Description
Chemical mapping of a 207-nucleotide RNA with 2A3. For 2A3 the reverse transcriptase was SuperScript II with manganese. Reactivities are given for positions 27 through 156. For 2A3, 424 sequencing reads were counted. Conditions: 150 mM KOAc, 10 mM MgCl2 and 150 mM bicine (pH 8.5), 24 C.
RNA sequence: GGGAACGACUCGAGUAGAGUCGAAAACAAGAUAAAAUCUUGCUUUCAAAGGGAGACAGCCAUUGAGCAGAUAAUUAAUUAUAAGAAUGGGUACAUACUUACACAGUGCUAUAAAGGGUGUAAGAAGGAAAAAUACAGGCUGCUACAAGAGAGGACAGCGGAUAAAAUGAUUCGUCAUUUUAUCCGCAAAAGAAACAACAACAACAAC
Reactivity to 2A3 in 0.01 (KOAc 150mM, MgCl2 10mM, bicine 150mM(pH8.5), 24C), signal-to-noise 1, nucleotides 027 to 156: c000a040a000g010a030u230a140a250a120a040u030c000u010u040g000c000u120u110u030c050a000a020a050g000g000g030a040g000a040c030a000g020c000c000a050u000u080g010a050g000c070a030g020a100u030a070a000u220u110a080a030u110u240a070u040a300a030g070a070a010u220g010g000g000u010a040c000a050u110a050c070u010u030a000c010a040c050a030g130u110g110c060u000a010u050a300a090a050g080g000g000u030g000u010a000a040g000a000a100g040g010a080a060a050a000a020u160a210c030a000g020g000c020u000g020c000u070a050c050a050a010g080a010g040a030g220g010a030c040a050